Chemical mapping of a 177-nucleotide RNA with 2A3 and DMS. For DMS, 3,657 sequencing reads were counted. Conditions: 150 mM KOAc, 10 mM MgCl2 and 150 mM bicine (pH 8.5), 24 C. Source: RMDB library M2PK90, as collected in RNAgym.
RNA sequence: GGGAACGACUCGAGUAGAGUCGAAAAUUAAAAGGGAACGACUCGACUAGAGUCGAAAAGACGCUCAACUCAUGGAGCGCAAGACGAAUAGCUACAUAUUCGACAUGAGGGCGCCGUUCGCAAAAAACAUAUACUGUUGCUUCGGCAACAGUAUAUGAAAAGAAACAACAACAACAAC
Reactivity to 2A3 in 0.01 (KOAc 150mM, MgCl2 10mM, bicine 150mM(pH8.5), 24C), signal-to-noise 3, nucleotides 027 to 126: u140u070a050a070a070a060g020g000g000a050a000c000g000a000c000u000c000g010a000c300u000a000g000a000g000u000c000g000a000a000a000a000g030a030c010g000c010u010c020a050a080c030u010c020a020u040g020g000a020g010c010g010c040a030a010g070a010c010g010a010a010u020a020g040c070u180a050c060a150u060a040u010u020c020g000a010c010a020u020g000a020g000g010g000c020g000c010c030g030u040u070c060g010c100a050a090a010a010a000a010
Reactivity to DMS in 0.01 (KOAc 150mM, MgCl2 10mM, bicine 150mM(pH8.5), 24C), signal-to-noise 3, nucleotides 027 to 126: u020u010a040a110a060a160g020g020g010a080a100c000g010a010c000u000c000g000a040c000u010a050g000a020g010u010c000g000a010a010a060a080g010a150c020g000c010u000c030a080a150c050u000c040a010u000g000g000a020g010c030g010c050a020a020g000a060c020g010a020a010u000a010g020c110u000a100c170a050u000a020u000u000c010g010a110c010a010u000g000a020g000g000g010c050g000c040c010g010u010u000c020g010c050a000a030a060a080a080a070